[RMDB]
RNA sequence: GGGAACGACUCGAGUAGAGUCGAAAAGAUAUGGAUGGGAGCGAUAAGCCUUAGGUCGGAAACGACCUUGGGCUUUUGACGCUUAGUCCUAAGUCAAAAGAGCUUUUCGGUUCGCCGAAAAGCUCAACGGUUAUGAAGUCUUCGGACUUCAUAACCGAAAAGAAACAACAACAACAAC
Reactivity to DMS in 0.01 (KOAc 150mM, MgCl2 10mM, bicine 150mM(pH8.5), 24C), signal-to-noise 1, nucleotides 027 to 126: g000a030u000a230u010g040g010a010u000g020g030g010a000g000c030g000a190u000a040a010g010c010c000u000u000a000g000g010u010c000g050g010a120a100a180c000g010a010c000c000u000u010g000g000g000c000u000u000u000u000g020a100c050g000c000u000u010a300g000u000c030c010u010a080a180g020u000c060a070a050a100a240g010a010g000c000u000u000u000u000c000g000g000u010u010c270g040c000c000g000a000a000a000a000g000c010u010c000a000a040